[RMDB]
RNA sequence: GGGAACGACUCGAGUAGAGUCGAAAAUAAUAUGCAUAUCGAGUUCCCAUGUAUUUUCGUAGCCCUGCGGCUGUAACAUUACAGCUUAGUAAGAAUGCUAGCUAACGAUAGCUAGCCGCAGGAUUAAAUACAUUAAGGUCUUCGGACCUUAAUGUAUAAAAGAAACAACAACAACAAC
Reactivity to DMS in 0.01 (KOAc 150mM, MgCl2 10mM, bicine 150mM(pH8.5), 24C), signal-to-noise 7, nucleotides 027 to 126: u010a070a110u000a070u010g010c080a060u000a090u010c090g000a160g020u000u000c000c000c000a130u000g010u000a040u000u000u000u000c060g010u000a100g000c120c000c010u000g010c010g000g000c000u000g010u000a040a150c200a120u010u000a020c050a020g010c010u000u010a070g000u010a090a100g010a090a080u000g010c000u000a000g010c000u000a040a140c230g010a120u000a010g010c020u000a010g010c000c010g010c000a010g000g000a080u000u000a030a090
Reactivity to 2A3 in 0.01 (KOAc 150mM, MgCl2 10mM, bicine 150mM(pH8.5), 24C), signal-to-noise 3, nucleotides 027 to 126: u070a010a010u130a040u190g020c050a020u080a050u250c070g060a050g080u010u010c010c010c020a000u050g010u010a130u000u090u020u100c050g010u020a010g020c010c010c000u000g000c010g000g010c010u000g010u020a110a100c080a100u100u150a010c030a010g000c020u020u050a060g010u020a090a050g060a160a020u100g020c000u010a010g000c000u020a060a090c150g170a160u060a070g000c040u010a000g010c010c000g000c000a000g000g000a000u000u010a000a000

This 177-nucleotide RNA was probed chemically with DMS and 2A3. Conditions: 150 mM KOAc, 10 mM MgCl2 and 150 mM bicine (pH 8.5), 24 C. The data come from the RNA Mapping Database (RMDB), library M2PK90.